[RMDB]
The record gives the reactivity of an RNA of 207 nucleotides to 2A3 and DMS. The DMS profile rests on 2,267 reads. It was measured as part of the RMDB library M2RFPK.

RNA sequence: GGGAACGACUCGAGUAGAGUCGAAAAACCAAGUCUGGGGGCCGAUGAGGGUUGGCUCAAAGUAGGGUUUUGACUUGACAACUCAAGCUGUGACCCCAAAACGAUGGAGGUAAAUGAGAAUCCUCCUAAAACUAUGGACACUUCGGUGUCCAUAGAAUCUAAUAUUCACCUUCGGGUGAAUAUUAGAAAAAGAAACAACAACAACAAC
Reactivity to 2A3 in 0.01 (KOAc 150mM, MgCl2 10mM, bicine 150mM(pH8.5), 24C), signal-to-noise 3, nucleotides 027 to 156: a000c020c000a040a000g080u050c060u050g010g000g010g020g040c010c020g070a040u050g100a130g090g100g000u020u030g020g010c040u010c070a060a050a040g080u120a050g010g110g060u030u090u130u110g050a030c000u040u060g020a020c000a060a040c050u000c030a000a020g020c030u060g040u100g210a220c000c000c000c000a030a130a000a000c070g050a100u130g000g020a010g010g010u100a160a160a110u190g020a070g060a070a060u030c000c000u010c000c000u040a030a030a000a010c000u000a000u000g000g000a000c000a010c010u010u080c220g060g000u000g000u000c000c000a000u000a000g000a000a000
Reactivity to DMS in 0.01 (KOAc 150mM, MgCl2 10mM, bicine 150mM(pH8.5), 24C), signal-to-noise 1, nucleotides 027 to 156: a130c000c020a050a180g020u010c070u020g010g030g010g030g080c050c050g020a080u000g020a300g020g010g070u000u010g010g030c050u010c040a010a040a080g000u000a090g040g010g010u000u000u000u000g020a050c040u010u000g000a080c040a060a120c090u000c010a050a190g010c030u010g030u000g030a070c020c000c020c020a030a040a090a130c110g000a080u000g000g000a000g030g020u000a040a100a180u000g010a200g040a210a200u000c010c000u000c000c000u010a020a050a060a140c000u010a010u000g000g000a050c000a000c020u010u020c290g040g020u000g020u000c010c000a000u000a000g000a070a080